[RMDB]
RNA sequence: GGGAACGACUCGAGUAGAGUCGAAAACAAUCUACAGUAUUAAAUUUCACCCUAGUGUUACUAUUCUUGUAAAAAUUCUGCCUCUGCAAAUUCAGUAGGUCAUUUUUGUGGAUGCUUUGGAUAGGUGACGAGCUGAAGACAAGCAACCGUUGGAGAACGUAGCGUGAGUAUUCGUACUCACGCUACGAAAAGAAACAACAACAACAAC
Reactivity to 2A3 in 0.01 (KOAc 150mM, MgCl2 10mM, bicine 150mM(pH8.5), 24C), signal-to-noise 1, nucleotides 027 to 156: c040a010a040u120c060u140a080c100a020g130u230a190u160u280a200a120a080u050u130u090c090a070c000c000c040u030a110g000u060g010u090u020a030c040u020a060u250u000c040u000u240g060u080a010a000a070a180a200u120u000c050u080g010c000c010u000c000u030g010c100a160a090a200u060u190c010a070g090u170a010g100g060u000c020a060u010u030u160u060u040g020u070g060g000a020u030g000c020u020u040u040g120g000a070u070a120g080g000u020g100a040c030g010a040g000c020u020g090a060a050g050a080c030a090a000g000c010a000a080c000c040g020u010u010g020g020a070g000a060a000

An RNA of 207 nucleotides, treated with 2A3 and read out base by base. Reactivities are given for positions 27 through 156. Conditions: 150 mM KOAc, 10 mM MgCl2 and 150 mM bicine (pH 8.5), 24 C.